[RMDB]
RNA sequence: GGGAACGACUCGAGUAGAGUCGAAAACGCGGUUGAUAACCGCCUGGUGUUUGACCGAUAAUUCGGUUGCCGAAAUUGCAGGGACAGGAACAGAACGUCAGGCUGUUCGGCCUGCGAGUGAGCGUACGCAUUGAUUCGCGUUCGCGCGAAUCAAUGCAAAAGAAACAACAACAACAAC
Reactivity to 2A3 in 0.01 (KOAc 150mM, MgCl2 10mM, bicine 150mM(pH8.5), 24C), signal-to-noise 1, nucleotides 027 to 126: c020g030c000g020g010u010u070g100a120u050a160a070c000c000g000c000c020u060g000g000u050g060u000u120u140g050a030c010c010g000a020u130a230a070u300u020c020g020g000u000u080g000c000c000g060a000a020a090u040u080g010c000a040g030g000g070a100c070a140g030g060a050a000c000a000g010a110a030c010g170u160c050a040g160g000c010u000g000u010u000c000g130g000c000c010u020g020c000g000a020g020u080g040a090g010c040g030u080a040c070
Reactivity to DMS in 0.01 (KOAc 150mM, MgCl2 10mM, bicine 150mM(pH8.5), 24C), signal-to-noise 2, nucleotides 027 to 126: c100g010c010g010g040u000u000g010a130u000a080a150c010c010g020c060c100u010g020g020u000g010u000u000u010g000a070c010c010g000a100u010a070a210u000u010c030g010g010u010u020g000c040c020g020a050a050a160u000u010g010c000a020g010g020g040a120c070a110g020g000a030a040c040a000g000a050a060c120g000u020c280a020g000g000c000u000g030u000u000c040g000g000c010c000u000g010c020g000a060g000u010g000a090g010c020g000u000a080c130